Background:
This 177-nucleotide RNA was probed chemically with 2A3 and DMS. Conditions: 150 mM KOAc, 10 mM MgCl2 and 150 mM bicine (pH 8.5), 24 C. It was measured as part of the RMDB library OK1LIB. DMS adducts were read by reverse transcription with MarathonRT.
[RMDB]
RNA sequence: GGGAACGACUCGAGUAGAGUCGAAAAAACAUGACCAUGCCUCUGUCAUGCACUAAAAAUAGUAGCCACCAUUAUAUUCGAGUUGGGAACGAGACUGGCUUAGAGCUGACAUUGACCAACACCAGCAACAAGUGUGGUGAUUCGUCACCACACUUGUAAAAGAAACAACAACAACAAC
Reactivity to 2A3 in 0.01 (KOAc 150mM, MgCl2 10mM, bicine 150mM(pH8.5), 24C), signal-to-noise 3, nucleotides 027 to 126: a000a000c120a110u110g030a030c020c000a040u170g000c000c000u030c040u050g030u020c010a040u100g090c050a020c060u220a070a000a000a030a020u180a050g020u070a020g050c010c010a020c000c010a060u170u060a090u060a050u190u110c110g000a030g040u000u060g000g040g000a030a030c010g000a020g050a090c050u000g010g000c000u030u060a040g000a010g070c010u050g020a040c020a060u070u200g050a040c010c010a050a000c010a010c030c000a010g150c010a040
Reactivity to DMS in 0.01 (KOAc 150mM, MgCl2 10mM, bicine 150mM(pH8.5), 24C), signal-to-noise 2, nucleotides 027 to 126: a080a000c000a040u040g020a100c090c010a060u080g010c070c000u050c050u080g000u030c000a030u000g030c110a040c110u040a070a080a020a260a040u040a080g000u000a000g020c020c010a050c020c040a040u000u000a050u040a130u030u000c130g000a070g020u000u000g000g000g020a270a040c050g030a070g030a080c160u000g040g000c080u000u070a090g040a050g000c030u000g020a050c020a010u000u020g000a030c000c030a000a020c130a050c030c020a080g000c010a110